[RMDB]
RNA sequence: GGGAACGACUCGAGUAGAGUCGAAAAGGGGCCGCCGUGAGCUUCGCCCAAGCCUACGUCUCCACGAAUGCCCAGUUCAACCUUUUGAGCGGAUGUACCUGGGAGGCCUGCAGGUUCGCCCUGGUCACUACCAAGGGCGCCGACAACUCUCAUGUGGAGGCGCACUAAGAUUCGUCUUAGUGCGCCUAAAAGAAACAACAACAACAAC
Reactivity to 2A3 in 0.01 (KOAc 150mM, MgCl2 10mM, bicine 150mM(pH8.5), 24C), signal-to-noise 2, nucleotides 027 to 156: g010g010g010g020c000c010g060c000c030g100u020g000a080g020c020u070u130c050g070c050c000c010a030a040g030c010c000u050a050c080g000u030c010u000c010c020a030c040g020a110a100u190g010c000c000c050a000g000u000u020c040a050a060c060c050u080u110u130u200g080a060g090c120g010g070a050u050g000u070a090c000c020u000g000g040g000a000g000g000c020c010u020g020c040a080g040g000u230u260c040g000c000c000c010u040g000g010u080c110a070c300u240a020c120c050a100a130g000g000g020c000g000c010c000g030a020c040a000a190c020u010c000u010c020a010u070g020u030g080g030
The record gives the reactivity of an RNA of 207 nucleotides to 2A3. 2A3 adducts were read by reverse transcription with SuperScript II with manganese. The reactions ran in a buffer of 150 mM KOAc, 10 mM MgCl2 and 150 mM bicine (pH 8.5), at 24 C. Values cover nucleotides 27 to 156.